Chemical mapping of a 177-nucleotide RNA with 2A3 and DMS. For DMS the reverse transcriptase was MarathonRT. The RNA was probed in 150 mM KOAc, 10 mM MgCl2 and 150 mM bicine (pH 8.5) at 24 C. For 2A3 the reverse transcriptase was SuperScript II with manganese. The DMS profile rests on 1,580 reads.
RNA sequence: GGGAACGACUCGAGUAGAGUCGAAAAUUUGGAGGGAAUGCUCCGCCAUCGCCGCUCAGUUUCGAGCAGGCUCUGAUGGCUGCAAGGCUGGAAGCCAGACAGACUGCUGAGGGAGCGCAGGCAACGCGCGUAGGGUCAAGUUCGCUUGACCCUACGCAAAAGAAACAACAACAACAAC
Reactivity to 2A3 in 0.01 (KOAc 150mM, MgCl2 10mM, bicine 150mM(pH8.5), 24C), signal-to-noise 2, nucleotides 027 to 126: u140u060u180g050g010a050g000g030g180a190a120u210g040c000u020c050c000g000c000c030a060u060c040g040c020c020g050c010u000c010a090g060u050u190u220c060g000a010g000c090a120g000g000c010u000c040u110g020a020u010g000g030c000u000g000c020a110a070g110g020c020u130g040g110a090a020g020c000c000a020g000a040c030a020g030a030c020u020g000c020u040g010a070g050g050g000a020g010c000g020c020a020g010g050c040a080a020c060g020c010
Reactivity to DMS in 0.01 (KOAc 150mM, MgCl2 10mM, bicine 150mM(pH8.5), 24C), signal-to-noise 2, nucleotides 027 to 126: u000u010u000g000g000a020g040g040g020a100a110u010g000c010u010c010c040g020c010c020a030u000c070g020c050c030g010c000u000c010a100g020u000u000u000c120g010a010g010c010a050g030g010c070u000c080u000g020a140u000g000g010c010u000g010c140a060a120g010g000c060u030g000g010a230a100g010c020c000a040g010a140c100a010g000a080c020u000g020c020u000g000a100g000g000g000a040g000c030g000c060a090g010g020c050a070a090c190g000c110
Source: RMDB library OK2TST, as collected in RNAgym.